[RMDB]
RNA sequence: GGGAACGACUCGAGUAGAGUCGAAAAGCCUUACGAUUCGUCGUAAGGCAUACAAAGUUUUGGCACUAAGAGCCCGCAGCGUUGGUGCUCCCACGCGGUGCAAUACGACGGAUUUCGAUCCGUCGAAUACUCUUUCUCGAUUCGUCGAGAAAGAGUAAAAAGAAACAACAACAACAAC
Reactivity to DMS in 0.01 (KOAc 150mM, MgCl2 10mM, bicine 150mM(pH8.5), 24C), signal-to-noise 3, nucleotides 027 to 126: g010c000c000u000u000a010c000g010a030u010u000c200g030u000c000g010u010a020a010g000g010c000a000u010a010c160a070a070a120g010u000u000u000u020g020g020c000a040c040u010a150a170g010a130g040c040c030c070g020c100a150g020c060g010u000u000g030g000u010g010c140u000c030c020c020a070c130g000c060g010g000u010g020c040a080a050u000a140c030g000a020c000g010g020a010u000u000u000c200g000a030u000c010c010g020u000c010g000a050a070
Reactivity to 2A3 in 0.01 (KOAc 150mM, MgCl2 10mM, bicine 150mM(pH8.5), 24C), signal-to-noise 2, nucleotides 027 to 126: g010c000c000u000u020a000c000g000a010u000u090c190g020u020c000g000u110a000a000g010g000c000a010u040a010c020a010a070a020g000u030u080u170u180g070g000c010a010c050u120a180a000g050a060g110c000c020c040g020c030a100g020c020g090u170u160g000g060u190g020c050u090c030c010c000a040c020g030c030g020g060u030g000c030a020a030u140a100c020g010a000c000g000g020a010u020u030u170c170g070a030u010c000c000g000u000c000g000a000a000
Structure probing data (DMS and 2A3) for a 177-nucleotide construct.
Conditions: 150 mM KOAc, 10 mM MgCl2 and 150 mM bicine (pH 8.5), 24 C.